[RMDB]
RNA sequence: GGGAACGACUCGAGUAGAGUCGAAAAGAUAUGGAUUUCGCAAAUGUAGGCGACCGAAGAACUCGGAAACGAGGGAGGUCGCUACACUCGUACGAAAUCCUAAGUCAAAGGGCUGUUCGCAGCCCAACAAUUUGAGGUACUUCGGUACCUCAAAUUGAAAAGAAACAACAACAACAAC
Reactivity to 2A3 in 0.01 (KOAc 150mM, MgCl2 10mM, bicine 150mM(pH8.5), 24C), signal-to-noise 2, nucleotides 027 to 126: g030a010u090a060u190g000g000a010u060u020u000c000g010c060a100a070a030u050g010u020a100g260g300c000g010a010c010c050g220a240a010g030a010a010c020u010c030g030g010a110a050a040c010g000a000g050g010g000a020g000g010u000c000g010c000u000a010c010a000c010u140c060g000u240a070c000g010a000a000a000u000c000c000u010a130a020g020u020c060a050a220a000g050g000g000c020u040g070u130u150c260g060c130a010g000c000c000c000a010a010
Reactivity to DMS in 0.01 (KOAc 150mM, MgCl2 10mM, bicine 150mM(pH8.5), 24C), signal-to-noise 2, nucleotides 027 to 126: g000a020u000a300u010g000g010a020u000u000u000c000g000c050a080a110a070u000g000u000a060g030g020c000g010a010c000c010g000a050a110g020a120a220c000u000c000g000g000a110a090a210c000g000a000g000g010g010a050g020g020u000c000g000c000u000a000c000a000c100u000c300g000u000a160c000g000a000a000a020u000c000c000u000a030a080g000u010c010a080a120a100g000g000g000c000u010g010u000u010c230g020c030a020g000c000c000c010a000a010
Structure probing data (2A3 and DMS) for a 177-nucleotide construct. Conditions: 150 mM KOAc, 10 mM MgCl2 and 150 mM bicine (pH 8.5), 24 C. It was measured as part of the RMDB library TTRDEL.